[RMDB]
Source: RMDB library OK1LIB, as collected in RNAgym. The record gives the reactivity of an RNA of 177 nucleotides to DMS and 2A3. The DMS profile rests on 53,395 reads. Values cover nucleotides 27 to 126. For 2A3, 263,424 sequencing reads were counted.

RNA sequence: GGGAACGACUCGAGUAGAGUCGAAAAUAGACGAGAUUGAGAACAAUCGUCAUACCCAUUUCACUCUAUGUGACGAUUGGUGAACGCUAUAUAGUGAAAUGGGUGUAGCGUUCACACUCAAUCUCGAGAUUGUUAGGUGAUUCGUCACUUAGCAAUCAAAAGAAACAACAACAACAAC
Reactivity to DMS in 0.01 (KOAc 150mM, MgCl2 10mM, bicine 150mM(pH8.5), 24C), signal-to-noise 9, nucleotides 027 to 126: u040a080g020a210c010g000a000g000a020u000u000g000a010g000a300a300c050a020a010u000c000g000u000c000a020u010a040c030c020c000a080u020u030u010c070a060c050u010c090u020a060u010g000u000g000a010c000g000a020u000u000g010g020u000g000a010a010c000g000c000u000a010u010a030u020a060g010u020g000a060a120a080u030g010g010g010u010g000u010a010g000c010g010u000u000c010a020c030a280c010u000c010a000a000u000c000u000c000g000a050
Reactivity to 2A3 in 0.01 (KOAc 150mM, MgCl2 10mM, bicine 150mM(pH8.5), 24C), signal-to-noise 9, nucleotides 027 to 126: u200a010g100a030c010g000a000g000a000u000u010g000a000g020a100a030c010a020a010u010c000g010u010c000a000u020a020c000c010c000a010u090u150u060c030a030c020u030c030u140a030u050g030u010g010a020c000g010a020u010u030g050g010u030g030a010a000c000g000c000u000a000u000a010u030a060g070u050g090a080a050a060u080g030g010g000u020g000u000a000g000c000g000u000u000c010a010c000a020c010u000c000a000a000u000c000u000c000g000a010